[RMDB]
RNA sequence: GGGAACGACUCGAGUAGAGUCGAAAAUUUAUGAUGAAGGUAUGGCUGUUGAGAUUAUUUGGUCGGGAUUGUAGUUUGAAGAUGUGCUCUUUUGAGCAGUCUCAACUUUGCUCGUUCCCGUUAUGGGCAUGCUACGUAACUUCGGUUACGUAGCAUGAAAAGAAACAACAACAACAAC
Reactivity to DMS in 0.01 (KOAc 150mM, MgCl2 10mM, bicine 150mM(pH8.5), 24C), signal-to-noise 2, nucleotides 027 to 126: u000u010u010a080u000g010a100u000g000a090a060g010g030u000a040u000g010g000c040u010g000u000u000g010a140g000a050u010u000a100u000u000u000g010g010u000c070g000g000g020a070u010u000g020u000a040g000u010u010u010g010a070a080g010a020u000g000u000g010c010u000c000u000u000u010u010g000a020g030c010a080g000u000c010u010c010a030a020c050u000u000u000g000c170u000c030g010u000u000c000c000c000g010u000u010a040u010g010g010g010
Reactivity to 2A3 in 0.01 (KOAc 150mM, MgCl2 10mM, bicine 150mM(pH8.5), 24C), signal-to-noise 2, nucleotides 027 to 126: u070u040u040a170u110g120a020u020g040a040a020g040g010u090a060u130g050g010c060u020g020u100u090g020a050g020a080u030u050a040u100u130u100g040g050u070c000g000g010g010a030u040u110g000u000a040g030u010u080u140g070a150a030g020a020u090g060u000g270c000u050c000u010u160u130u300g000a000g000c010a000g000u000c000u020c000a000a070c060u000u050u070g000c000u000c010g010u000u030c030c010c010g010u100u060a130u160g000g080g000